[RMDB]
RNA sequence: GGGAACGACUCGAGUAGAGUCGAAAAGAUAUGGACACGUAUACCAGCUAUGAAGUAAAUCGGAAACGAUUUAUGGAGCUGAAUACGGUGUCCUAAGUCAAAAGGCGAGUGCUUCGGCACUCGCCAACGUACAUGUAAGCUUCGGCUUACAUGUACGAAAAGAAACAACAACAACAAC
Reactivity to 2A3 in 0.01 (KOAc 150mM, MgCl2 10mM, bicine 150mM(pH8.5), 24C), signal-to-noise 3, nucleotides 027 to 126: g010a010u060a030u150g010g000a000c020a020c060g030u060a030u100a230c240c050a040g000c010u120a300u300g020a000a000g010u000a010a010a000u000c010g010g000a020a030a010c020g010a000u000u000u010a000u020g020g020a000g010c020u020g070a060a000u050a040c070g020g020u010g000u000c010c000u000a030a020g070u000c000a000a040a080a150g000g000c000g000a010g000u020g000c020u110u220c300g150g010c000a000c010u000c010g000c000c000a010a000
Reactivity to DMS in 0.01 (KOAc 150mM, MgCl2 10mM, bicine 150mM(pH8.5), 24C), signal-to-noise 3, nucleotides 027 to 126: g020a070u010a300u010g000g000a020c020a020c000g010u000a010u010a140c300c050a020g030c010u000a290u020g010a190a200g000u000a000a000a000u000c000g010g000a130a070a170c000g020a000u000u000u000a000u000g010g000a020g020c000u000g000a070a010u000a000c020g020g020u010g010u010c000c010u010a010a060g000u010c040a060a070a130a130g020g010c000g010a020g050u000g000c000u000u010c210g020g040c000a000c010u000c000g000c000c010a000a010